[RMDB]
RNA sequence: GGGAACGACUCGAGUAGAGUCGAAAAAACGCAGAACCCUUUGAACAUAGAAGGAACUACCUCCCUUCCUAAAGUGCUUACGGACAGGUUCCUCAUGAGAGUUGCGGUAGACUACCCAAGCAUGGAGGGUGUAAUCCGGAUUCGUCCGGAUUACACCAAAAGAAACAACAACAACAAC
Reactivity to DMS in 0.01 (KOAc 150mM, MgCl2 10mM, bicine 150mM(pH8.5), 24C), signal-to-noise 1, nucleotides 027 to 126: a040a010c060g010c080a010g000a050a170c080c010c020u000u000u000g020a130a080c170a130u000a120g020a180a060g000g000a060a120c100u000a210c150c010u000c030c000c030u000u010c010c070u020a060a070a050g000u000g010c000u000u000a080c100g020g000a040c110a090g020g110u000u000c020c020u000c030a020u000g000a040g000a060g000u000u010g000c080g000g020u000a010g010a090c110u000a170c010c020c000a060a080g010c090a030u000g020g020a090g000
Structure probing data (DMS) for a 177-nucleotide construct. The data come from the RNA Mapping Database (RMDB), library OK2TST. The reactions ran in a buffer of 150 mM KOAc, 10 mM MgCl2 and 150 mM bicine (pH 8.5), at 24 C.